[RMDB]
RNA sequence: GGGAACGACUCGAGUAGAGUCGAAAAGCACGUAGGUUCAGAUGAUGGGCCCGCAUCUGUACGAAAGUGAGACGAAAGUCCAGCCUACGUGCAUGAGCACGCGGGCCCCGUGCUCUGCAGCAAAAGAACUGAGCAUGGCUUUCGAGCCAUGCUCAGUAAAAGAAACAACAACAACAAC
Reactivity to 2A3 in 0.01 (KOAc 150mM, MgCl2 10mM, bicine 150mM(pH8.5), 24C), signal-to-noise 1, nucleotides 027 to 126: g010c000a000c000g010u000a000g000g060u180u000c070a020g000a000u010g010a040u140g020g000g000c000c030c000g050c020a000u000c020u020g090u080a040c150g230a040a030a110g070u090g030a080g000a020c000g060a040a010a010g000u030c020c020a030g000c020c000u000a000c000g020u000g000c000a000u020g000a000g000c000a020c030g000c020g000g050g070c080c020c000c000g000u000g000c000u000c000u030g000c020a190g020c020a020a000a160a000g080a080